Structure probing data (DMS and 2A3) for a 177-nucleotide construct. For 2A3, 5,504 sequencing reads were counted.
RNA sequence: GGGAACGACUCGAGUAGAGUCGAAAAGUUGCCGACGAACCUUCCAACCUUCCAAACGUCGUUUUCGACAACCUUCCAACCUUCCAAUCUACUCGAGAGGAGGAGGAGGAGGAGCAGGAGGAAUUAAACAAUACUCACAUUUCGAUGUGAGUAUUGUAAAAGAAACAACAACAACAAC
Reactivity to DMS in 0.01 (KOAc 150mM, MgCl2 10mM, bicine 150mM(pH8.5), 24C), signal-to-noise 5, nucleotides 027 to 126: g020u000u000g020c060c040g010a090c110g000a080a120c060c030u000u000c020c020a090a140c100c020u000u010c030c060a070a130a160c150g000u000c010g020u000u010u000u010c000g000a050c040a120a110c060c040u000u000c010c020a130a110c040c010u000u000c030c050a080a220u000c010u000a050c100u000c070g000a030g010a300g000g010a070g000g010a080g010g010a180g000g010a040g000g000a070g020c200a100g000g000a100g010g000a080a080u010u000a070a090
Reactivity to 2A3 in 0.01 (KOAc 150mM, MgCl2 10mM, bicine 150mM(pH8.5), 24C), signal-to-noise 4, nucleotides 027 to 126: g050u050u060g120c040c010g000a050c030g040a060a080c000c000u040u000c020c040a050a050c010c010u070u020c030c000a070a100a090c040g010u020c010g010u110u030u100u170c020g030a010c010a050a050c010c010u080u000c030c030a110a120c020c020u140u010c010c000a050a090u000c020u070a090c060u060c060g060a050g000a030g090g010a030g010g010a040g010g010a030g010g010a040g000g020a010g010c040a030g000g050a010g030g040a040a030u120u190a120a110